[RMDB]
Conditions: 150 mM KOAc, 10 mM MgCl2 and 150 mM bicine (pH 8.5), 24 C. The record gives the reactivity of an RNA of 207 nucleotides to 2A3 and DMS.
RNA sequence: GGGAACGACUCGAGUAGAGUCGAAAAGCAACAGAUAACUGGAUGCAGCGUAGGAUUCUACGCAUAUCCAGUACGAAUGGUACCUGUAAAGAAAAUAACGUUGGAUGUACAAGUACCAACAGCGGGUUAAGCGAUGGUGAUGUCAAUCACAUUUGCAUCGUAAUUACUGAUUCGUCAGUAAUUACGAAAAAGAAACAACAACAACAAC
Reactivity to 2A3 in 0.01 (KOAc 150mM, MgCl2 10mM, bicine 150mM(pH8.5), 24C), signal-to-noise 6, nucleotides 027 to 156: g030c010a010a070c020a060g060a120u120a170a030c000u000g000g000a010u040g060c170a090g000c080g000u010a000g020g150a300u300u100c000u010a000c000g000c000a000u030a000u030c000c000a000g010u020a000c010g070a060a100u070g020g010u020a010c010c010u000g010u070a050a070a040g120a050a090a030a060u160a080a030c100g050u040u040g040g000a060u070g000u040a020c010a040a030g020u010a040c000c000a010a030c010a010g040c040g080g000g000u050u100a080a020g010c020g030a020u070g050g080u020g000a030u020g100u170c060a070a060u030c010a030c010a050u070u080u210g040c000a050
Reactivity to DMS in 0.01 (KOAc 150mM, MgCl2 10mM, bicine 150mM(pH8.5), 24C), signal-to-noise 4, nucleotides 027 to 156: g020c030a080a100c050a110g010a120u000a100a080c000u000g020g010a040u000g030c180a170g030c000g030u000a040g000g040a240u000u010c000u000a010c000g000c000a230u000a030u000c010c010a020g000u000a070c040g010a150a120u000g000g030u000a010c010c000u000g000u000a040a110a110g000a220a100a050a120u020a080a110c130g030u000u000g030g000a270u010g010u010a050c020a020a020g020u000a040c000c010a050a080c060a130g000c060g020g010g000u010u000a070a100g020c030g020a040u000g020g030u000g010a060u010g030u000c270a070a100u000c030a030c020a080u000u000u000g020c030a260
Notes: DMS adducts were read by reverse transcription with MarathonRT.